[RMDB]
RNA sequence: GGGAACGACUCGAGUAGAGUCGAAAAGGACAAGCCACAUCCAGAGGACCCCUUCAGCGAACAGAAGACCCUGGUACCGGGGGGGAAUAGGCCAUAGUACGAGGGGAGAUGCUAGGAGUCGGGGGAAAUAGAAGAGUCUUCGGACUCUUCAAAAGAAACAACAACAACAAC
Reactivity to 2A3 in 0.01 (KOAc 150mM, MgCl2 10mM, bicine 150mM(pH8.5), 24C), signal-to-noise 6, nucleotides 027 to 129: g020g000a020c040a020a050g040c030c010a060c020a100u040c010c030a010g040a090g050g040a100c010c020c000c000u030u050c020a050g030c010g050a040a020c020a060g050a090a000g070a070c000c000c000u060g040g000u040a070c010c050g000g000g000g000g000g000g010a010a070u080a090g020g000c020c010a040u040a060g070u050a040c040g000a040g000g000g030g010a030g010a010u050g040c050u060a030g040g000a020g030u050c030g000g000g000g000g020a040a050a020u140a020
Reactivity to DMS in 0.01 (KOAc 150mM, MgCl2 10mM, bicine 150mM(pH8.5), 24C), signal-to-noise 5, nucleotides 027 to 129: g000g010a000c000a120a110g000c050c070a100c090a140u000c030c030a120g020a060g000g000a130c040c030c030c000u000u000c090a100g030c080g020a050a050c090a060g050a150a050g010a130c100c060c020u000g030g020u040a090c120c000g000g000g000g000g000g000g000a040a030u070a110g040g030c070c060a090u040a000g020u070a110c060g010a100g000g000g000g000a060g030a030u030g020c000u050a070g000g050a090g000u020c040g000g000g000g000g000a060a060a050u070a120